[RMDB]
Structure probing data (2A3 and DMS) for a 177-nucleotide construct. DMS adducts were read by reverse transcription with MarathonRT. It was measured as part of the RMDB library RFM100. For 2A3 the reverse transcriptase was SuperScript II with manganese. The RNA was probed in 150 mM KOAc, 10 mM MgCl2 and 150 mM bicine (pH 8.5) at 24 C. The 2A3 profile rests on 1,291 reads.

RNA sequence: GGGAACGACUCGAGUAGAGUCGAAAAUGAUUCGGUAAGGAACCGGGAGCACCAUCUGCGUAGGCUUGAGGUUUAAGACUUGCGUCGCCUACGGUCUUGGAUAGCCCCCGCCAGGCAGGGACCCCAAUCAAACCAUUUGCUUCGGCAAAUGGUUUGAAAAAGAAACAACAACAACAAC
Reactivity to 2A3 in 0.01 (KOAc 150mM, MgCl2 10mM, bicine 150mM(pH8.5), 24C), signal-to-noise 3, nucleotides 027 to 126: u130g030a060u040u100c080g010g070u200a140a100g180g010a030a040c040c000g030g000g000a010g010c010a020c020c000a020u050c070u230g090c030g010u010a000g020g020c030u060u190g040a030g070g110u010u000u160a070a060g080a050c040u110u200g010c050g060u060c130g000c000c000u020a030c020g000g050u060c050u030u050g010g020a040u050a090g010c000c000c000c000c000g000c000c010a040g020g000c000a010g000g000g080a080c000c010c000c010a000a070
Reactivity to DMS in 0.01 (KOAc 150mM, MgCl2 10mM, bicine 150mM(pH8.5), 24C), signal-to-noise 2, nucleotides 027 to 126: u000g010a090u030u040c060g020g020u040a120a120g000g030a080a070c100c040g000g000g020a190g000c000a070c060c000a000u010c070u020g030c040g000u000a000g000g000c030u040u020g000a110g000g000u000u030u070a040a070g000a000c000u000u030g020c150g000u010c120g000c000c000u030a010c020g000g000u020c020u000u000g010g000a160u000a090g010c020c010c000c010c030g000c000c060a080g060g010c050a120g000g020g000a140c060c000c000c010a070a090